[RMDB]
RNA sequence: GGGAACGACUCGAGUAGAGUCGAAAAACUAUCGAUACGUCGAUAGAUCUGCCAGUUGCACAGAGCAUUGUUCACGGAUUUUCCGAGCCUGAUGGAUUUACAGUGAUAGUCGGCUACCUGGGGACAAAUGCCAACGUACUUUCGAGUACGUUGGCAUAAAAGAAACAACAACAACAAC
Reactivity to 2A3 in 0.01 (KOAc 150mM, MgCl2 10mM, bicine 150mM(pH8.5), 24C), signal-to-noise 2, nucleotides 027 to 126: a000c000u030a000u010c000g000a030u020a120c280g080u010c010g000a000u000a000g030a120u000c010u040g110c020c010a050g010u070u070g120c160a140c030a090g030a040g000c030a040u000u010g050u060u050c010a020c070g000g050a040u000u110u060u280c000c030g000a050g020c100c000u160g050a150u120g060g070a060u070u140u180a120c110a000g090u000g070a020u030a040g050u020c030g000g010c000u010a070c000c020u050g070g000g000g000a000c000a020a200
Reactivity to DMS in 0.01 (KOAc 150mM, MgCl2 10mM, bicine 150mM(pH8.5), 24C), signal-to-noise 1, nucleotides 027 to 126: a030c010u020a050u010c000g000a030u000a110c170g040u000c000g000a020u000a020g000a060u040c020u000g000c000c000a080g000u000u040g000c130a030c080a090g010a180g010c050a090u000u000g010u000u000c120a110c100g000g000a180u000u000u000u000c020c000g010a110g020c070c000u000g020a110u010g020g000a080u000u010u040a040c150a080g000u000g000a100u000a040g020u000c040g010g000c070u040a130c080c040u000g010g000g000g000a100c160a090a040